Notes:
An RNA of 177 nucleotides, treated with 2A3 and DMS and read out base by base.
RNA sequence: GGGAACGACUCGAGUAGAGUCGAAAACACGAAGGUUGGCUAAUCCUGGUCGGACAUCAGGUGGUUAGUGCAGUGGCAUAAGCCAUCUUGGCGCUAAUAGAUACUAAUCGUAGCAUAGCUGAAUAAACAUAUCACCGGAUUUCGAUCCGGUGAUAUGAAAAGAAACAACAACAACAAC
Reactivity to 2A3 in 0.01 (KOAc 150mM, MgCl2 10mM, bicine 150mM(pH8.5), 24C), signal-to-noise 5, nucleotides 027 to 126: c120a000c030g110a070a020g100g000u150u120g030g010c010u030a010a050u070c010c000u030g010g030u070c030g050g020a080c000a060u080c010a040g000g030u060g020g050u070u040a020g020u000g020c000a020g060u040g100g000c020a130u150a290a040g010c000c000a020u040c070u060u090g170g000c010g000c010u000a000a010u030a100g060a010u120a070c050u100a080a060u080c090g020u050a020g000c050a080u040a030g030c000u050g060a130a040u140a120a070a010
Reactivity to DMS in 0.01 (KOAc 150mM, MgCl2 10mM, bicine 150mM(pH8.5), 24C), signal-to-noise 4, nucleotides 027 to 126: c040a120c180g020a110a230g000g010u010u010g000g000c030u020a080a060u020c020c030u010g000g000u000c110g010g000a270c090a020u000c040a060g010g030u010g010g010u000u000a050g030u000g000c020a150g000u000g000g010c000a160u060a040a080g020c040c000a040u010c110u010u020g040g020c010g000c000u000a020a070u020a070g010a060u010a090c120u000a050a070u040c020g000u000a050g010c060a110u030a050g000c040u030g000a060a080u050a080a130a200
2A3 adducts were read by reverse transcription with SuperScript II with manganese. Source: RMDB library OK1LIB, as collected in RNAgym. For 2A3, 3,532 sequencing reads were counted. The reactions ran in a buffer of 150 mM KOAc, 10 mM MgCl2 and 150 mM bicine (pH 8.5), at 24 C.